[RMDB]
RNA sequence: GGGAACGACUCGAGUAGAGUCGAAAAGGGCGAUCCUUCGGGAUCGCCCAAAUAAAGGGAGUCGAGUGCAAGAAGCACAGUCAAUAACUGACGCCACGACAAAAAGUACAUGGUUCGCCAUGUACAAGAUGAGAAGAUACUUCGGUAUCUUCUCAUCAAAAGAAACAACAACAACAAC
Reactivity to DMS in 0.01 (KOAc 150mM, MgCl2 10mM, bicine 150mM(pH8.5), 24C), signal-to-noise 3, nucleotides 027 to 126: g010g000g030c020g020a010u000c000c010u000u030c160g060g000g000a000u010c000g000c000c000c000a000a000a040u010a060a070a120g000g000g020a050g010u010c020g020a120g010u000g010c010a090a100g000a090a180g020c020a050c020a210g000u000c020a080a140u000a120a120c180u000g000a030c060g020c080c030a080c070g000a050c100a070a030a070a090a100g020u000a000c000a010u000g000g000u000u000c290g010c010c000a000u000g010u000a010c010a050a060
Reactivity to 2A3 in 0.01 (KOAc 150mM, MgCl2 10mM, bicine 150mM(pH8.5), 24C), signal-to-noise 2, nucleotides 027 to 126: g010g020g010c030g060a000u060c090c100u150u150c300g010g000g000a000u000c000g030c010c000c000a000a000a000u010a000a000a010g040g010g010a030g010u010c020g010a010g020u020g000c020a100a100g110a200a030g210c010a000c020a000g020u050c010a020a130u150a260a110c100u040g020a010c000g050c060c050a070c040g080a020c050a020a150a010a020a020g000u000a000c000a000u000g020g000u020u020c130g020c060c000a000u000g000u000a000c010a000a010
Annotation
The record gives the reactivity of an RNA of 177 nucleotides to DMS and 2A3. The 2A3 profile rests on 3,214 reads. The data come from the RNA Mapping Database (RMDB), library M2PK50. The DMS profile rests on 2,504 reads. For DMS the reverse transcriptase was MarathonRT. The RNA was probed in 150 mM KOAc, 10 mM MgCl2 and 150 mM bicine (pH 8.5) at 24 C. For 2A3 the reverse transcriptase was SuperScript II with manganese.